[RMDB]
RNA sequence: GGGAACGACUCGAGUAGAGUCGAAAAAGCCGUCUCGCUGGGUAAAAUCAGGAUGUGCCGCGGAACCCGCUCCUCAGCUAGUCACACUUCGGAAGCGCGGGCAACGCAGGUAUUAUCGUUCUAAAGGACUAAUAAAGGAGUUCGCUCCUUUAUUAGUAAAAGAAACAACAACAACAAC
Reactivity to DMS in 0.01 (KOAc 150mM, MgCl2 10mM, bicine 150mM(pH8.5), 24C), signal-to-noise 9, nucleotides 027 to 126: a090g000c050c030g010u010c030u000c060g010c020u010g000g000g000u020a060a050a110a130u030c060a070g010g010a030u010g010u000g000c010c020g010c020g020g000a250a270c040c010c010g020c010u010c030c030u000c040a060g010c080u000a050g020u020c210a100c110a300c060u010u010c080g000g010a050a040g010c170g020c030g010g000g010c030a030a150c030g010c020a050g010g010u000a020u020u020a040u000c020g000u000u010c020u000a060a100a120g010g000
Reactivity to 2A3 in 0.01 (KOAc 150mM, MgCl2 10mM, bicine 150mM(pH8.5), 24C), signal-to-noise 6, nucleotides 027 to 126: a000g040c030c010g040u020c020u010c030g030c010u030g020g020g060u140a100a110a030a100u140c040a040g090g010a030u040g010u020g020c000c000g000c010g010g010a050a050c000c000c010g010c010u020c000c000u020c010a020g010c060u090a060g070u160c060a020c010a010c080u030u040c040g040g030a090a060g090c030g000c020g060g010g000c040a020a010c010g000c050a080g010g010u000a010u070u110a030u050c030g030u060u000c050u060a090a080a050g110g010